An RNA of 207 nucleotides, treated with DMS and read out base by base.
RNA sequence: GGGAACGACUCGAGUAGAGUCGAAAAGCGCAAAUCCACAAACGCCAACGAUGAGCGUUUCGCUGUAGCCGCUUAAGGCAACAGCCGGGGCCGCCUGAGGCCUGUUACCAAAGACGGCUGGCGGGGGUAAUUACUUAUUGCUUCGGCAAUAAGUAAAGGUAGUUUUAUGGUUCGCCAUAAAACUACCAAAAGAAACAACAACAACAAC
Reactivity to DMS in 0.01 (KOAc 150mM, MgCl2 10mM, bicine 150mM(pH8.5), 24C), signal-to-noise 1, nucleotides 027 to 156: g010c010g000c020a080a110a070u000c010c010a060c040a060a240a060c020g000c000c020a070a160c090g070a130u000g000a100g000c010g000u000u010u000c010g040c010u060g020u010a070g000c010c010g000c220u010u000a060a220g030g010c020a040a070c040a020g020c010c040g040g020g060g020c000c020g070c030c020u020g010a300g020g000c000c010u000g000u000u000a040c000c010a040a280a120g000a000c030g000g000c000u000g000g040c010g000g020g000g070g030u020a100a150u020u010a030c000u000u000a000u010u000g000c000u000u070c300g020g010c000a010a010u010a010a020g020u000a010a000a080
It was measured as part of the RMDB library M2RFPK. Reactivities are given for positions 27 through 156.